[RMDB]
RNA sequence: GGGAACGACUCGAGUAGAGUCGAAAAAUGAACGUGGUGGGCGUAAGUUAGUAGAAGAUCUAAUGGUACGCGGUGGGUUUUCGACUGUAGUCGAAACCACCACCACCACCAAGUCGUUCCCACCGAAGCCACCAGGAUGAUUCGUCAUCCUGGUGGCAAAAGAAACAACAACAACAAC
Reactivity to 2A3 in 0.01 (KOAc 150mM, MgCl2 10mM, bicine 150mM(pH8.5), 24C), signal-to-noise 1, nucleotides 027 to 126: a010u120g010a140a020c030g010u000g000g000u000g000g040g000c000g000u000a030a020g000u010u000a000g000u050a070g050a300a050g010a060u100c010u030a020a000u000g240g000u020a000c030g020c020g010g000u010g000g040g030u000u050u000u020c000g010a010c000u140g100u300a100g000u070c000g010a010a000a000c000c010a020c020c000a000c010c030a000c000c000a000c000c010a000a000g020u020c020g000u020u010c010c000c000a010c050c000g050a100a010

Source: RMDB library M2PK90, as collected in RNAgym. Structure probing data (2A3) for a 177-nucleotide construct. Values cover nucleotides 27 to 126. The reactions ran in a buffer of 150 mM KOAc, 10 mM MgCl2 and 150 mM bicine (pH 8.5), at 24 C.